[RMDB]
Background:
Structure probing data (DMS and 2A3) for a 177-nucleotide construct. For DMS, 8,118 sequencing reads were counted. Values are in units of 0.01, from 0 to 300, in steps of 10. DMS adducts were read by reverse transcription with MarathonRT. It was measured as part of the RMDB library OK2TST. The 2A3 profile rests on 14,302 reads. In probing experiments dimethyl sulfate is read out at A N1 and C N3, which are open when not base-paired.

RNA sequence: GGGAACGACUCGAGUAGAGUCGAAAAGGAAGUGAUCACAGGACAAGCUUCUCUGUAACCAUUUUGGAUCCUGAACAAUUUGGAACACUAUCCAAUAUAUACAACAGGAAACAGUACGACGUGGUCAACUCCAUGUAUGUUUCGACAUACAUGGAGUAAAAGAAACAACAACAACAAC
Reactivity to DMS in 0.01 (KOAc 150mM, MgCl2 10mM, bicine 150mM(pH8.5), 24C), signal-to-noise 8, nucleotides 027 to 126: g010g010a070a050g020u010g020a030u000c020a060c020a130g000g010a130c100a120a200g000c050u000u010c010u000c030u000g010u010a110a180c120c030a100u000u000u010u000g010g000a160u000c000c020u010g000a090a180c150a070a110u010u000u010g000g020a050a170c170a080c190u010a100u000c010c010a000a020u000a060u000a100u000a090c170a080a120c020a010g000g000a020a050a110c040a060g010u000a100c090g000a120c130g000u010g000g000u000c030a100
Reactivity to 2A3 in 0.01 (KOAc 150mM, MgCl2 10mM, bicine 150mM(pH8.5), 24C), signal-to-noise 5, nucleotides 027 to 126: g050g010a020a020g040u030g050a020u050c040a010c050a060g100g050a050c050a160a030g040c020u040u010c110u000c020u040g070u060a050a050c010c000a040u100u060u030u030g030g010a020u000c000c010u010g020a040a040c080a090a100u040u020u040g020g010a110a020c120a040c240u100a160u050c000c000a010a000u070a010u000a000u010a050c090a140a010c000a030g020g000a020a070a010c010a010g040u070a030c050g020a020c060g060u020g000g000u010c020a030